An RNA of 177 nucleotides, treated with DMS and 2A3 and read out base by base. Source: RMDB library RFM100, as collected in RNAgym. DMS adducts were read by reverse transcription with MarathonRT.
[RMDB]
RNA sequence: GGGAACGACUCGAGUAGAGUCGAAAACCGCGGACGAUCUGGGCUACAAUGGUCAGGUCGCAAGACGAUGGCGCUGAAACUCAACGCGGACUGCGGGCAGACCCGGGGGCAGUACCCGGCGCCUCCAACGAUUGAAUGUGUUCGCACAUUCAAUCGUAAAAGAAACAACAACAACAAC
Reactivity to DMS in 0.01 (KOAc 150mM, MgCl2 10mM, bicine 150mM(pH8.5), 24C), signal-to-noise 2, nucleotides 027 to 126: c020c010g040c060g000g020a250c020g000a060u000c060u000g000g010g000c020u000a110c300a120a110u030g000g020u000c040a070g010g020u010c010g050c130a140a050g000a070c090g020a130u020g000g000c090g000c080u010g010a100a090a130c060u030c080a040a070c050g020c010g030g000a020c000u030g000c030g060g020g000c110a130g020a070c080c030c000g040g000g020g000g010c020a060g070u020a100c060c050c010g000g000c060g000c040c000u000c040c110a090
Reactivity to 2A3 in 0.01 (KOAc 150mM, MgCl2 10mM, bicine 150mM(pH8.5), 24C), signal-to-noise 3, nucleotides 027 to 126: c010c000g020c040g020g020a080c010g000a020u010c010u060g010g000g090c030u130a070c170a190a160u120g100g160u050c000a000g000g030u020c000g010c020a030a030g030a030c050g100a120u120g030g000c030g010c050u060g030a110a010a000c060u070c090a070a020c040g010c000g020g050a040c010u040g010c010g000g000g000c050a030g060a130c010c000c020g000g000g000g000g020c050a050g030u040a080c000c030c000g000g000c020g000c000c000u040c020c000a050